[RMDB]
RNA sequence: GGGAACGACUCGAGUAGAGUCGAAAAUGUGCAUGGCCACGGACCGUGUGCCAGGCCCUGUCCCGUCACUGUAGACACACAGUCAGGGCCUGCUGAGGACACGGGCGAGGGGAGCACCCUUGCCAGCGGAUCCUUCUUGUUUCGACAAGAAGGAUCCAAAAGAAACAACAACAACAAC
Reactivity to DMS in 0.01 (KOAc 150mM, MgCl2 10mM, bicine 150mM(pH8.5), 24C), signal-to-noise 3, nucleotides 027 to 126: u010g010u010g020c020a040u010g010g010c020c040a140c210g030g000a100c080c020g020u000g030u000g010c010c020a040g010g000c010c000c010u010g000u030c030c080c090g010u000c100a100c120u030g020u000a100g010a120c210a090c140a100c200a080g000u000c010a010g000g000g000c000c000u000g010c120u000g020a130g020g000a100c070a040c100g030g010g000c000g010a020g000g000g000g000a170g010c190a180c010c020c020u000u020g000c000c020a080g020c150
Reactivity to 2A3 in 0.01 (KOAc 150mM, MgCl2 10mM, bicine 150mM(pH8.5), 24C), signal-to-noise 2, nucleotides 027 to 126: u150g040u030g030c050a060u060g020g050c010c040a130c110g060g010a080c030c000g000u020g000u030g160c010c010a000g000g000c000c020c000u020g010u040c050c010c010g050u100c030a050c090u160g050u200a080g120a160c020a010c010a000c010a160g010u040c000a000g030g020g010c000c000u000g030c030u040g090a110g070g020a000c020a020c060g040g010g000c010g000a030g020g010g000g000a060g120c090a110c000c010c000u020u010g020c010c000a040g060c090